The record gives the reactivity of an RNA of 177 nucleotides to DMS and 2A3. The 2A3 profile rests on 864 reads. DMS adducts were read by reverse transcription with MarathonRT.
RNA sequence: GGGAACGACUCGAGUAGAGUCGAAAACGAAGUCGCUGACGUCGUGGAUAAGGAUGUGGCCGCUUUCUUCUGCCGGAGUCCCGGUGCCGUUGCCGUGCCAAACGGUUGUUGUCGCGAUCGCGACGCCAACCUAGGUUGCAUUCGUGCAACCUAGGUUAAAAGAAACAACAACAACAAC
Reactivity to DMS in 0.01 (KOAc 150mM, MgCl2 10mM, bicine 150mM(pH8.5), 24C), signal-to-noise 2, nucleotides 027 to 126: c050g000a050a090g020u010c090g060c030u020g010a080c120g040u010c010g030u000g000g010a100u000a040a090g000g010a100u020g030u010g010g010c050c030g010c050u000u030u010c050u000u000c050u000g000c000c040g050g000a160g020u030c040c000c000g000g000u000g010c060c020g000u000u000g030c120c030g020u020g000c050c030a080a040a090c110g020g000u000u000g010u000u010g000u020c030g000c040g010a090u010c090g000c040g020a020c010g000c150c140
Reactivity to 2A3 in 0.01 (KOAc 150mM, MgCl2 10mM, bicine 150mM(pH8.5), 24C), signal-to-noise 2, nucleotides 027 to 126: c040g070a070a030g010u070c000g050c160u170g050a050c010g010u030c000g090u120g040g030a150u140a200a090g070g020a020u050g030u070g020g000c000c000g010c010u060u090u010c000u070u030c010u050g030c020c030g040g000a120g130u060c020c050c000g010g040u030g030c040c010g040u040u080g040c000c030g000u030g060c030c060a120a120a000c080g070g000u040u080g040u060u020g010u010c010g000c030g090a130u140c100g000c010g010a010c020g000c000c000